[RMDB]
RNA sequence: GGGAACGACUCGAGUAGAGUCGAAAAGUUGAUUUACGAUUCGCCGAGAAGGUUAGCGCUCAAUCAGCUGAGAUGAGGAGGGUAAUAGUGGCAGAUACGAUUUCUGUUAGCGAUCUUGGAGGAAUAGCUUUUGACCCAUCUCAUAGAGUGAUGAAUCGUGUCUGUAAACUUUCGAGUUUACAGACACAAAAGAAACAACAACAACAAC
Reactivity to DMS in 0.01 (KOAc 150mM, MgCl2 10mM, bicine 150mM(pH8.5), 24C), signal-to-noise 2, nucleotides 027 to 156: g000u010u020g000a120u000u000u000a130c050g000a160u000u010c060g010c040c030g020a130g030a100a070g010g000u000u000a030g000c070g010c060u010c060a030a050u010c030a100g020c050u010g020a070g010a110u010g000a100g000g030a140g010g010g030u010a030a100u000a070g030u010g010g000c000a050g010a060u010a070c090g010a220u000u000u000c030u030g000u010u000a100g000c030g010a070u000c060u000u010g020g020a090g000g010a080a100u010a100g010c060u000u030u010u000g040a100c030c000c060a080u000c020u000c040a110u000a130g010a070g000u000g000a140u010g010a100a070u010c050
Reactivity to 2A3 in 0.01 (KOAc 150mM, MgCl2 10mM, bicine 150mM(pH8.5), 24C), signal-to-noise 6, nucleotides 027 to 156: g030u040u030g060a110u060u040u150a030c050g040a100u040u060c020g000c010c010g040a050g050a150a080g090g020u100u100a070g030c030g020c060u030c070a080a130u050c030a040g020c050u050g000a030g000a090u070g020a070g040g030a050g020g040g020u050a080a050u050a160g040u080g050g000c020a010g010a020u080a100c120g040a070u040u120u040c020u020g040u080u050a050g020c010g060a070u000c010u060u060g050g020a050g030g000a050a040u070a050g000c010u050u080u010u090g030a030c000c030c000a050u010c010u000c010a040u070a070g070a010g030u100g040a110u090g050a040a050u090c080